[RMDB]
RNA sequence: GGGAACGACUCGAGUAGAGUCGAAAACAACAGGGAGGUUGGUGGUGGACGAGCCACUCGCCAACCGGGUCAGGUCCCGAAGGAAGCAGCCCUAACGAGCCAGGCACGGGUCGCCGUGCCAGUACAACUAAUGGCGAAGCUUCGGCUUCGCCAUUAGAAAAGAAACAACAACAACAAC
Reactivity to DMS in 0.01 (KOAc 150mM, MgCl2 10mM, bicine 150mM(pH8.5), 24C), signal-to-noise 1, nucleotides 027 to 126: c080a110a130c140a130g000g030g040a080g020g000u000u000g010g090u000g000g020u000g000g000a140c270g000a090g000c010c000a000c000u000c050g050c000c000a020a070c010c000g020g000g000u000c020a180g000g030u000c000c000c010g000a140a050g000g010a060a030g000c050a130g010c010c010c020u010a210a180c040g000a070g040c120c090a130g000g000c000a000c000g000g000g010u010c300g000c020c000g070u000g000c000c000a050g000u000a060c080a090a250